[RMDB]
RNA sequence: GGGAACGACUCGAGUAGAGUCGAAAAAAGCAGUGGCCAUCAGCUCAGAGCCAUUGGUCAUUUUUGGUUUGGCAGAAAUUGACAUGUCCUUGCAGUAUUUUAAAGAAGCUAUUGAUUACUAUGCACAGUUAGACAAUCGUCAAAUCCUUGAAUUGAACCGCAGGUAUUAUUUCGAUAAUACCUGCGGAAAAGAAACAACAACAACAAC
Reactivity to 2A3 in 0.01 (KOAc 150mM, MgCl2 10mM, bicine 150mM(pH8.5), 24C), signal-to-noise 2, nucleotides 027 to 156: a040a010g030c000a020g000u000g010g000c020c010a030u100c060a070g050c000u060c060a090g010a020g090c050c010a020u000u040g010g020u000c020a050u000u050u060u080u090g060g030u060u000u030g050g030c030a040g050a080a150a140u080u080g020a030c030a030u030g010u000c000c010u060u020g000c000a000g040u110a070u070u140u060u130a130a250a050g160a090a030g040c020u080a050u080u010g000a010u010u010a050c050u130a040u060g030c060a060c030a040g000u080u050a010g020a010c010a040a070u050c050g020u020c010a020a030a070u070c010c020u010u050g050a100a130u210u210g020a080a040
Reactivity to DMS in 0.01 (KOAc 150mM, MgCl2 10mM, bicine 150mM(pH8.5), 24C), signal-to-noise 1, nucleotides 027 to 156: a150a120g000c000a060g020u000g020g020c020c020a070u000c020a120g000c040u040c130a220g010a220g010c040c020a150u000u010g020g000u030c000a070u000u000u000u040u000g000g010u000u020u010g020g000c080a110g010a010a060a080u010u000g000a040c020a120u000g000u020c040c050u000u000g010c120a070g000u000a050u000u000u000u010a030a120a140g000a200a110g070c040u000a250u000u000g020a060u000u010a040c040u020a170u020g040c000a070c090a050g020u010u000a110g020a070c000a070a060u010c060g020u020c030a020a130a190u000c000c050u000u000g010a080a140u010u020g000a100a250
Description
This 207-nucleotide RNA was probed chemically with 2A3 and DMS. DMS adducts were read by reverse transcription with MarathonRT. For DMS, 1,438 sequencing reads were counted. Reactivities are given for positions 27 through 156. The RNA was probed in 150 mM KOAc, 10 mM MgCl2 and 150 mM bicine (pH 8.5) at 24 C.